Notes:
An RNA of 207 nucleotides, treated with 2A3 and read out base by base. For 2A3 the reverse transcriptase was SuperScript II with manganese.
RNA sequence: GGGAACGACUCGAGUAGAGUCGAAAAGGGUCUCUCGAGCAGAGUAUCGGAACUGGCCUGUAUUUCCGUGUACAUCUCUCCGAAGGUGCACCUGAGCUACAGCUACUCGAAUGGAGUCUACCUUGUCAACUGUUCCGUAGCUUCGAGACCCGUGUCACGGGAUCAUCAUGUUCGCAUGAUGAUCCCGAAAAGAAACAACAACAACAAC
Reactivity to 2A3 in 0.01 (KOAc 150mM, MgCl2 10mM, bicine 150mM(pH8.5), 24C), signal-to-noise 2, nucleotides 027 to 156: g010g000g000u040c040u000c000u000c140g070a030g020c050a030g000a130g250u250a250u210c000g000g000a010a000c020u030g010g000c030c030u010g000u010a010u000u010u040c000c030g100u050g020u200a020c010a040u000c000u000c000u030c020c030g260a240a010g000g040u000g000c000a030c000c050u030g010a000g000c000u000a010c030a010g050c060u090a040c050u040c110g190a140a130u280g170g000a020g010u010c060u080a180c000c020u020u040g020u030c080a120a120c160u100g000u000u000c000c000g020u010a070g030c000u170u100c030g000a000g010a000c020c000c000g000u030g010u060c030a060

It was measured as part of the RMDB library OK3TST.